The record gives the reactivity of an RNA of 177 nucleotides to 2A3 and DMS. For DMS the reverse transcriptase was MarathonRT. The data come from the RNA Mapping Database (RMDB), library M2PK90. For DMS, 3,128 sequencing reads were counted.
RNA sequence: GGGAACGACUCGAGUAGAGUCGAAAAAUAAAAGAGAGUAGAUGAUUCGCGUUAAGUGUGUGUGAAUGGGAUGUCGUCACACAACGAACCGAGAGCGCGGUGAAUCAUUGCAUCCGCUCCAAAAAAACUUCAUAAUGGAGUUCGCUCCAUUAUGAAGAAAAGAAACAACAACAACAAC
Reactivity to 2A3 in 0.01 (KOAc 150mM, MgCl2 10mM, bicine 150mM(pH8.5), 24C), signal-to-noise 4, nucleotides 027 to 126: a000u090a010a020a040a000g070a000g010a010g030u150a060g020a050u020g000a010u040u050c010g000c040g060u060u100a170a060g050u100g020u000g000u000g000u010g160a090a060u060g050g000g060a040u100g130u150c050g030u030c020a000c000a000c000a030a050c030g040a040a040c040c070g090a090g030a020g240c040g000c030g060g010u030g030a010a030u050c020a030u010u050g010c000a020u000c010c000g000c020u010c020c040a010a080a010a030a030a050a100
Reactivity to DMS in 0.01 (KOAc 150mM, MgCl2 10mM, bicine 150mM(pH8.5), 24C), signal-to-noise 3, nucleotides 027 to 126: a070u020a010a040a080a070g000a090g000a070g000u000a250g010a020u000g000a010u000u000c000g010c070g020u000u000a070a100g010u000g040u020g010u000g010u000g000a060a030u000g010g020g000a060u000g010u010c170g010u000c000a010c010a010c010a030a020c030g000a120a060c170c110g010a130g000a040g020c060g010c090g010g020u010g010a040a030u000c030a010u000u000g020c040a030u000c040c010g000c010u000c000c060a000a000a060a040a070a050a070